Record summary:
Structure probing data (2A3) for a 207-nucleotide construct. For 2A3, 471 sequencing reads were counted. The reactions ran in a buffer of 150 mM KOAc, 10 mM MgCl2 and 150 mM bicine (pH 8.5), at 24 C. As a SHAPE reagent, 2A3 marks flexible, mostly unpaired nucleotides at the ribose 2'-OH.
[RMDB]
RNA sequence: GGGAACGACUCGAGUAGAGUCGAAAAUAUAUUCUGUCAGUGCAAACCACAUGUACAACAGUGGUCUCAUAAGAUUACAAUACUGUUUUUACUGUAUCUUUUGUUUAGAUACACAAACACCAUUGUGUUAAAAUUUUCUACAGAAUUCAGUGCAGUAUCAGGGUAGAUCUUUCGAGAUCUACCCUGAAAAAGAAACAACAACAACAAC
Reactivity to 2A3 in 0.01 (KOAc 150mM, MgCl2 10mM, bicine 150mM(pH8.5), 24C), signal-to-noise 1, nucleotides 027 to 156: u240a040u060a070u140u000c010u050g090u000c070a020g040u000g090c070a100a030a060c030c020a000c060a250u110g040u140a040c040a160a000c000a100g010u020g070g060u040c010u000c070a120u080a070a040g000a100u120u220a130c070a180a040u050a040c040u010g070u080u000u080u050u130a040c040u000g000u010a040u090c030u040u060u010u000g080u060u070u060a040g050a000u050a060c010a000c020a000a090a020c040a060c040c020a080u140u000g000u000g020u000u040a060a000a030a040u120u200u080u010c000u000a000c000a010g050a040a030u050u210c000a000g010u040g080c000a010g060u180a010